[RMDB]
Chemical mapping of a 177-nucleotide RNA with DMS and 2A3. The reactions ran in a buffer of 150 mM KOAc, 10 mM MgCl2 and 150 mM bicine (pH 8.5), at 24 C. For DMS the reverse transcriptase was MarathonRT. It was measured as part of the RMDB library OK1LIB. The DMS profile rests on 34,746 reads.
RNA sequence: GGGAACGACUCGAGUAGAGUCGAAAACAACCGGUGGAAGCAGCCCCUCGAAGCGGUGGCCGCCGAUUGGCAAUUCGCCGGAGAUGAUCGGCUGCUCGUCGUCGGCUUCGGAAUGCAAUGCGUGGGCAGUAAUAAUUAUCUUCGGAUAAUUAUUACUAAAAGAAACAACAACAACAAC
Reactivity to DMS in 0.01 (KOAc 150mM, MgCl2 10mM, bicine 150mM(pH8.5), 24C), signal-to-noise 9, nucleotides 027 to 126: c090a100a160c050c020g010g030u010g010g010a080a100g010c090a150g000c010c010c010c060u010c040g000a090a130g010c030g010g000u010g000g000c050c070g010c020c010g000a040u010u030g010g010c020a110a150u030u030c180g010c000c000g000g010a110g010a120u030g000a060u000c040g000g010c000u010g010c060u010c070g020u000c040g010u000c020g000g010c020u000u000c030g010g010a090a040u020g000c070a060a080u030g010c050g010u020g000g000g010c060
Reactivity to 2A3 in 0.01 (KOAc 150mM, MgCl2 10mM, bicine 150mM(pH8.5), 24C), signal-to-noise 9, nucleotides 027 to 126: c030a020a050c010c010g030g030u070g050g040a080a020g040c070a020g010c010c000c010c010u040c030g060a110a030g020c020g020g050u060g040g060c020c000g010c000c010g040a060u050u090g000g000c020a040a170u210u130c060g000c010c010g070g030a160g030a100u250g020a040u080c000g000g000c000u020g000c020u020c020g050u020c010g020u000c010g050g010c010u030u010c010g030g060a130a060u150g030c050a050a070u090g030c040g060u120g010g030g000c010